An RNA of 177 nucleotides, treated with DMS and 2A3 and read out base by base. The RNA was probed in 150 mM KOAc, 10 mM MgCl2 and 150 mM bicine (pH 8.5) at 24 C. 2A3 adducts were read by reverse transcription with SuperScript II with manganese. The data come from the RNA Mapping Database (RMDB), library OK2TRN.
RNA sequence: GGGAACGACUCGAGUAGAGUCGAAAACGACCAGCCGCAGCAGCGCGGUCUUCUCGUAGGGCGCGUAGUGGUAGAUGUGCAUGUUGGGGUGGCGCCGGCGCCGUCUGGCGACUAUCGCCAGGAAAUCACGUACUGUAUGGUUCGCCAUACAGUACGUAAAAGAAACAACAACAACAAC
Reactivity to DMS in 0.01 (KOAc 150mM, MgCl2 10mM, bicine 150mM(pH8.5), 24C), signal-to-noise 5, nucleotides 027 to 126: c120g010a120c030c040a130g020c040c030g010c050a120g010c110a130g010c060g010c030g000g000u000c010u000u000c080u000c100g020u010a100g000g010g010c030g010c060g010u000a070g030u010g010g020u000a070g000a090u000g020u010g010c050a060u000g010u010u010g010g010g010g000u000g000g010c050g000c050c030g010g010c080g000c050c070g010u000c010u000g010g010c010g010a200c220u000a100u010c000g010c000c000a030g000g010a050a060a090u010c120
Reactivity to 2A3 in 0.01 (KOAc 150mM, MgCl2 10mM, bicine 150mM(pH8.5), 24C), signal-to-noise 2, nucleotides 027 to 126: c050g030a040c000c020a000g080c020c010g020c010a090g000c010a020g040c020g020c030g130g010u000c000u050u030c000u030c030g080u140a090g030g080g030c050g020c040g050u100a080g060u040g110g060u040a070g010a160u070g070u110g020c030a040u050g060u100u150g070g030g060g000u010g030g010c020g030c020c000g000g000c030g000c020c000g020u050c000u030g000g030c000g020a050c030u130a090u200c010g000c020c000a000g050g030a020a080a040u190c100